[RMDB]
Chemical mapping of a 207-nucleotide RNA with 2A3.

RNA sequence: GGGAACGACUCGAGUAGAGUCGAAAAAGCGUCGCGGUACGCCGCUACGCAAGGCGCAUUUGAACUGUAUUGUACGCCUUGCAUAAAGCAAAAGUACUAAAAAAACGUGCCGUUACGACGGCACGAAAAAACAUCCAUUGGUUCGCCAAUGGAUGAACUCCAUUGAGAGCUUCGGCUCUCAAUGGAGAAAAGAAACAACAACAACAAC
Reactivity to 2A3 in 0.01 (KOAc 150mM, MgCl2 10mM, bicine 150mM(pH8.5), 24C), signal-to-noise 1, nucleotides 027 to 156: a000g060c040g000u060c040g000c050g000g000u000a000c180g060c080c000g010c010u000a000c050g060c030a000a000g000g000c030g000c000a070u050u100u260g060a150a060c080u120g030u270a040u090u070g080u040a000c040g020c000c080u000u000g010c020a030u140a060a120a020g050c040a030a030a000a000g100u060a040c130u220a050a100a040a010a010a010a000c010g000u000g000c000c000g030u040u030a080c300g040a030c000g040g000c000a000c000g000a000a000a000a000a000a000c010a000u000c000c000a000u000u030g030g000u050u030c120g060c060c000a000a000u010g000g020a000u000g000a000a020
The reactions ran in a buffer of 150 mM KOAc, 10 mM MgCl2 and 150 mM bicine (pH 8.5), at 24 C. For 2A3 the reverse transcriptase was SuperScript II with manganese.